[RMDB]
RNA sequence: GGGAACGACUCGAGUAGAGUCGAAAAGAAAAGUAGCCUAGUGGUUGGCUGCGAACCACGAAAAGGAUCCUAGGCCUUGGAUCCGAAGGCCGAAAAGCAUCUAACUCAUGAUGCGAUGAGGAAGAAAGGGUAUCUUUAACUUCGGUUAAAGAUACCCAAAAGAAACAACAACAACAAC
Reactivity to DMS in 0.01 (KOAc 150mM, MgCl2 10mM, bicine 150mM(pH8.5), 24C), signal-to-noise 3, nucleotides 027 to 126: g000a060a090a050a100g010u050a170g000c000c010u000a090g020u000g010g010u000u010g000g000c010u000g000c040g010a050a020c000c010a000c010g000a070a050a120a140g000g000a030u000c000c000u020a090g000g000c110c070u010u000g020g020a040u030c010c010g000a130a020g000g000c010c030g010a060a030a060a140g000c020a050u000c010u010a020a240c110u020c110a060u030g010a070u010g000c030g000a050u010g000a110g010g010a160a090g010a100a120a090
Reactivity to 2A3 in 0.01 (KOAc 150mM, MgCl2 10mM, bicine 150mM(pH8.5), 24C), signal-to-noise 3, nucleotides 027 to 126: g150a010a040a010a020g070u100a010g010c010c000u020a030g040u050g040g040u030u060g020g060c090u060g040c030g000a010a000c000c000a010c030g000a120a040a000a000g000g000a000u000c000c030u060a040g180g000c020c000u060u060g050g020a020u000c000c000g000a040a010g020g010c030c030g050a060a060a000a000g000c000a030u010c000u070a110a060c050u010c120a110u090g050a000u020g030c010g030a080u130g030a000g060g010a050a100g080a120a100a030